[RMDB]
RNA sequence: GGGAACGACUCGAGUAGAGUCGAAAAGGGGUCACCGAGAGGAUAAAGACAUGAGCGGUACUGAAGCCUCCACGGUACCUGCUCAACAGCUUUAUCUCCCCACCUCGGUGACGGAGGCACCCAAACUCCUCGUAAUGCUUCGGCAUUACGAGGAGAAGGAAAGUACUCAGUUCGCUGAGUACUUUCCAAAAGAAACAACAACAACAAC
Reactivity to 2A3 in 0.01 (KOAc 150mM, MgCl2 10mM, bicine 150mM(pH8.5), 24C), signal-to-noise 1, nucleotides 027 to 156: g130g000g020g010u010c000a000c000c000g000a000g000a000g010g000a000u020a020a000a000g030a070c160a300u190g000a000g000c020g010g010u010a010c000u030g020a050a030g010c000c010u000c020c000a000c020g010g000u000a000c000c000u050g000c000u010c010a140a210c110a110g030c000u000u020u000a010u010c000u020c050c000c000c010a040c000c010u000c000g000g000u010g000a010c020g000g010a000g010g000c000a040c000c000c010a050a100a110c010u000c000c000u010c000g000u000a000a000u000g000c000u040u090c180g060g020c000a040u000u000a000c000g000a010g000g000a000g000a000a000
Source: RMDB library RNAMAK, as collected in RNAgym. Chemical mapping of a 207-nucleotide RNA with 2A3. The reactions ran in a buffer of 150 mM KOAc, 10 mM MgCl2 and 150 mM bicine (pH 8.5), at 24 C.